RNA sequence: GGGAACGACUCGAGUAGAGUCGAAAACAUACAUAGGUUUCUUUACAUCUCCACACCCUCUUAAAAUACCAUUUGCUAUUUGUUGUGUCGCAAUAAAUGGAUACGUAAAUAAUGUAAACUCUAUGUAACUAUAUAUAGCAUUCGUGCUAUAUAUAGUAAAAGAAACAACAACAACAAC
Reactivity to DMS in 0.01 (KOAc 150mM, MgCl2 10mM, bicine 150mM(pH8.5), 24C), signal-to-noise 5, nucleotides 027 to 126: c070a150u020a060c050a040u010a010g000g010u000u000u010c050u020u000u000a050c060a100u000c040u010c010c010a040c090a090c030c020c030u030c070u010u040a030a060a050a090u010a040c050c040a060u020u010u010g000c040u030a040u020u010u000g000u000u010g000u010g010u000c240g000c050a070a050u020a040a050a050u020g020g010a080u020a020c100g000u010a020a040a100u040a070a040u020g010u030a030a020a040c070u020c010u000a020u000g010u000a050
Reactivity to 2A3 in 0.01 (KOAc 150mM, MgCl2 10mM, bicine 150mM(pH8.5), 24C), signal-to-noise 9, nucleotides 027 to 126: c020a020u130a010c010a030u040a020g040g010u020u010u010c010u010u050u050a030c020a080u050c040u030c090c010a040c020a060c030c030c000u090c040u120u180a080a100a070a050u140a100c020c010a040u030u030u050g000c010u020a040u080u080u070g040u020u020g020u020g010u030c030g010c030a020a050u080a130a100a020u100g020g020a040u050a110c060g060u050a020a040a090u160a080a040u140g090u140a040a050a020c030u020c000u090a020u040g020u020a020